[RMDB]
RNA sequence: GGGAACGACUCGAGUAGAGUCGAAAAUGUACUCACUUUGACGAUGAUUAACCAUCAUUGAGGAGAACCAAAGUAACUUUUGGGUGUUAGGUACAAGGUAAAAAAAAUCUGAGCUUGAAGUUGUGAGGAUCAAGGGAAAGUUCGCUUUCCCUUGAUCAAAAGAAACAACAACAACAAC
Reactivity to DMS in 0.01 (KOAc 150mM, MgCl2 10mM, bicine 150mM(pH8.5), 24C), signal-to-noise 1, nucleotides 027 to 126: u010g000u000a040c010u000c040a130c010u000u000u000g000a180c300g050a050u000g000a030u000u000a110a120c160c050a100u020c000a040u020u000g010a300g010g000a150g000a140a070c060c010a030a010a090g000u000a120a120c300u010u000u000u000g010g000g010u020g010u000u000a020g000g030u000a040c050a030a060g020g030u050a000a000a000a000a000a020a120a050u000c080u000g020a140g010c160u000u000g000a000a100g000u000u000g000u000g070a140g020